The record gives the reactivity of an RNA of 177 nucleotides to DMS and 2A3. The data come from the RNA Mapping Database (RMDB), library OK1LIB. For 2A3 the reverse transcriptase was SuperScript II with manganese.
RNA sequence: GGGAACGACUCGAGUAGAGUCGAAAAAAGUGGACCGAGCGAGAUUCGUGGCCGGUCCCGUUCGAGCGCCAUCGUCAGGGCUCGUAGUGCCCGGUGGUGCUCGCGGGCUUCCGCGGCCGCCACCACCGAAGCGCUUUAUGUUCGCAUAAAGCGCUUCAAAAGAAACAACAACAACAAC
Reactivity to DMS in 0.01 (KOAc 150mM, MgCl2 10mM, bicine 150mM(pH8.5), 24C), signal-to-noise 1, nucleotides 027 to 126: a110a060g030u020g000g020a020c040c010g020a110g000c020g000a090g010a120u080u050c040g050u010g020g030c110c000g000g030u010c000c000c030g000u000u020c040g000a000g000c040g020c020c020a020u020c130g000u060c220a180g000g000g000c020u010c100g030u000a100g040u010g000c010c000c040g000g030u000g000g000u000g000c000u000c000g000c000g000g010g030c190u010u010c020c010g000c010g000g000c160c030g000c060c000a080c040c010a030c160c080
Reactivity to 2A3 in 0.01 (KOAc 150mM, MgCl2 10mM, bicine 150mM(pH8.5), 24C), signal-to-noise 4, nucleotides 027 to 126: a000a000g060u130g010g010a090c100c050g020a090g060c020g000a120g030a230u120u230c050g030u040g010g040c040c040g030g030u120c000c010c000g040u070u090c040g000a010g000c040g130c060c000a020u070c030g230u180c160a210g030g020g000c020u040c050g040u050a130g100u030g030c000c000c000g000g020u010g000g000u010g000c000u000c020g000c000g000g000g020c020u260u040c010c030g000c020g010g000c060c040g000c010c000a000c000c000a000c000c060